[RMDB]
RNA sequence: GGGAACGACUCGAGUAGAGUCGAAAACGCUUCUUCCAUGGCUUGCCAAACCGCCAAGUUUUCCUCGUAGUAGUUAUUACCACGACUUGGACGUACGUUUGGCACUUCCAUUUGAUUCCAAGGACGUGGCGCGUGAAUCAACAACAAGUCAAUGUAGGCUUGUAUAGUCUUUCGAGACUAUACAAGCAAAAGAAACAACAACAACAAC
Reactivity to DMS in 0.01 (KOAc 150mM, MgCl2 10mM, bicine 150mM(pH8.5), 24C), signal-to-noise 1, nucleotides 027 to 156: c110g050c030u000u000c020u000u010c060c050a100u010g040g040c070u010u000g040c010c020a030a070a040c000c030g040c010c020a000a080g010u000u000u010u010c070c040u000c030g040u020a040g010u000a030g030u000u020a160u000u000a020c020c010a020c000g010a070c010u000u000g000g000a090c100g010u020a040c040g020u000u000u000g020g010c030a010c090u010u000c030c020a130u000u010u000g010a170u000u000c020c060a080a160g000g000a040c060g020u000g010g010c000g010c080g010u000g000a130a160u020c090a080a090c030a070a080c020a060a060g020u020c010a020a110u010g030u000a170g030
Reactivity to 2A3 in 0.01 (KOAc 150mM, MgCl2 10mM, bicine 150mM(pH8.5), 24C), signal-to-noise 4, nucleotides 027 to 156: c040g040c030u040u040c010u080u020c070c010a050u040g020g000c030u030u060g000c000c000a010a000a000c010c010g030c010c010a010a030g010u020u050u150u260c040c080u060c060g010u020a050g000u000a030g060u080u300a100u300u100a060c030c020a020c040g020a010c020u010u000g020g040a210c000g020u100a080c040g010u020u000u000g000g030c000a000c010u060u000c040c000a040u010u060u160g080a070u100u030c050c010a060a070g090g000a050c070g070u070g010g010c050g010c020g080u120g060a030a050u080c010a030a080c000a020a020c030a050a030g110u080c050a080a050u220g050u100a110g150
Record summary:
Chemical mapping of a 207-nucleotide RNA with DMS and 2A3. For DMS the reverse transcriptase was MarathonRT. The RNA was probed in 150 mM KOAc, 10 mM MgCl2 and 150 mM bicine (pH 8.5) at 24 C. The data come from the RNA Mapping Database (RMDB), library OK3TST. For 2A3 the reverse transcriptase was SuperScript II with manganese.